[RMDB]
An RNA of 177 nucleotides, treated with DMS and read out base by base.
RNA sequence: GGGAACGACUCGAGUAGAGUCGAAAAGAUAUGGAUCGCGCUCGAUAAGCUAUGUGUCGGAAACGACAUUUAGCUUUUGACGAGCGCGAUCCUAAGUCAAACCCUGCUAUGUUCGCAUAGCAGGGAACAUCUAGCAGCACUUCGGUGCUGCUAGAUGAAAAGAAACAACAACAACAAC
Reactivity to DMS in 0.01 (KOAc 150mM, MgCl2 10mM, bicine 150mM(pH8.5), 24C), signal-to-noise 1, nucleotides 027 to 126: g000a020u020a210u020g000g000a000u000c010g000c000g000c000u000c000g040a150u000a090a030g030c000u000a010u010g020u000g010u000c000g020g000a070a020a150c000g030a040c000a000u000u000u000a010g000c000u000u000u000u000g020a220c030g000a000g010c000g030c000g000a000u000c000c000u000a010a050g020u010c010a120a170a180c000c000c000u000g010c010u000a000u000g000u000u010c190g020c020a000u000a000g000c000a010g000g000g010a010a020
Description: The reactions ran in a buffer of 150 mM KOAc, 10 mM MgCl2 and 150 mM bicine (pH 8.5), at 24 C. DMS adducts were read by reverse transcription with MarathonRT. Source: RMDB library TTRDEL, as collected in RNAgym.